[RMDB]
RNA sequence: GGGAACGACUCGAGUAGAGUCGAAAAGACACUACCACCGCCUCACGCAGCAAGGACCGAAGGAGGCGGACAGGACAUGGAGGACUCUGACGAGGAAAUGGAGUACAUGCCGCCGCUGCACAGUGAGCAGGGACUCAUGCUUCGGCAUGAGUCCCUGAAAAGAAACAACAACAACAAC
Reactivity to 2A3 in 0.01 (KOAc 150mM, MgCl2 10mM, bicine 150mM(pH8.5), 24C), signal-to-noise 1, nucleotides 027 to 126: g030a030c020a010c080u110a090c000c000a000c010c000g000c000c000u050c000a090c130g230c030a080g040c050a040a140g120g080a040c010c020g040a040a000g080g040a050g000g000c100g000g000a010c000a000g030g000a000c040a030u120g000g020a210g090g070a050c000u020c000u030g010a010c000g000a050g000g110a000a000a110u230g000g010a000g020u010a020c000a060u070g040c030c010g000c000c000g000c060u060g000c100a070c060a090g140u060g000a060g080
Reactivity to DMS in 0.01 (KOAc 150mM, MgCl2 10mM, bicine 150mM(pH8.5), 24C), signal-to-noise 1, nucleotides 027 to 126: g000a100c280a100c100u000a120c000c120a100c000c000g000c010c000u000c000a190c080g000c060a050g000c070a090a020g060g070a120c030c000g000a180a120g000g000a000g210g010c000g000g000a030c000a120g030g040a090c080a030u000g020g000a020g000g000a130c020u000c000u050g000a020c050g060a060g270g000a290a150a040u040g000g000a120g020u000a000c140a010u030g000c010c050g000c000c010g000c000u000g020c010a080c300a030g060u000g000a050g000